[RMDB]
RNA sequence: GGGAACGACUCGAGUAGAGUCGAAAAACUCGUCGUUACGACGACGAGACAGGCCAGAAGAGGCGCGUUGCCCAAGUAACGGUGUUGGAGGAGCCAGUCCUGUGAUAACACCUGAGGGGGUGCAUCGCCGAGGUGAUUGAACGGCUGGCCACGUUCAUCAUCGGCUACAGGGGCUGAAUCCCCUGGGUUGUCACCAGAAGCGUUCGCAGUCGGGCGUUUCGCAAGUGGUGGAGCACUUCUGGGUGAAGCGGCACUACGGUGCCGCAAAAGAGACAUUCGUGUCUCUUAAAAGAAACAACAACAACAAC
Reactivity to DMS in 0.01 (KOAc 150mM, MgCl2 10mM, bicine 150mM(pH8.5), 24C), signal-to-noise 3, nucleotides 027 to 266: a140c000u010c000g010u010c000g010u000u010a120c140g020a030c000g020a000c000g000a020g020a100c140a080g000g000c000c000a030g000a080a050g010a120g010g010c090g020c050g010u010u000g010c010c010c010a050a070g010u010a190a300c160g000g020u000g010u000u000g000g000a050g000g000a070g000c050c020a030g010u000c010c010u000g000u020g020a120u010a010a040c000a000c010c000u000g010a150g000g000g010g010g000u020g000c040a030u000c000g030c020c020g010a050g000g020u000g000a010u010u020g010a040a000c000g010g000c000u000g010g000c000c020a030c000g000u000u010c000a020u000c000a020u000c010g000g010c030u000a100c010a010g010g000g000g000c050u000g000a070a060u000c000c000c000c010u000g000g000g000u010u000g010u000c010a020c010c000a210g000a090a130g000c000g020u000u000c000g020c240a190g010u020c120g000g010g010c020g000u000u000u010c000g000c120a090a140g010u010g000g000u000g020g000a060g010c100a040c000u000u000c000u000g000g030g000u000g010a100a130g000c050g010g020c020a000c020u000a110c160g030g040u000g040c020c020g090c010a020a020
Reactivity to 2A3 in 0.01 (KOAc 150mM, MgCl2 10mM, bicine 150mM(pH8.5), 24C), signal-to-noise 2, nucleotides 027 to 266: a030c020u010c000g020u010c000g000u010u070a080c270g010a000c000g010a010c000g000a130g030a000c010a030g130g080c010c000a000g000a050a010g030a100g000g040c030g000c000g080u030u050g010c000c000c000a030a010g000u010a010a000c190g000g010u000g000u000u010g010g030a030g010g000a010g000c000c020a000g030u020c000c000u300g120u020g300a010u000a020a000c000a010c000c000u020g010a050g000g010g020g010g030u110g040c000a020u050c010g010c020c050g030a020g000g010u010g020a100u210u120g000a020a000c000g000g030c010u010g010g010c000c010a000c000g020u010u000c010a000u000c000a000u000c000g020g000c030u130a190c030a000g020g040g010g000c000u040g010a000a030u040c000c000c000c000u000g000g000g010u030u010g040u050c000a010c020c010a020g030a080a000g010c010g030u010u030c050g040c110a170g150u300c070g000g100g000c010g010u020u010u040c010g040c070a200a100g080u020g030g020u000g000g030a020g050c040a010c010u010u000c020u020g030g020g010u030g060a090a010g000c030g030g030c010a000c010u020a030c260g120g030u000g000c010c010g020c020a000a000
Record summary:
Source: RMDB library POS240, as collected in RNAgym. Chemical mapping of a 307-nucleotide RNA with DMS and 2A3. High 2A3 reactivity points to a flexible backbone, as in loops and unpaired stretches. For DMS, 8,411 sequencing reads were counted. In probing experiments dimethyl sulfate is read out at A N1 and C N3, which are open when not base-paired. For DMS the reverse transcriptase was MarathonRT.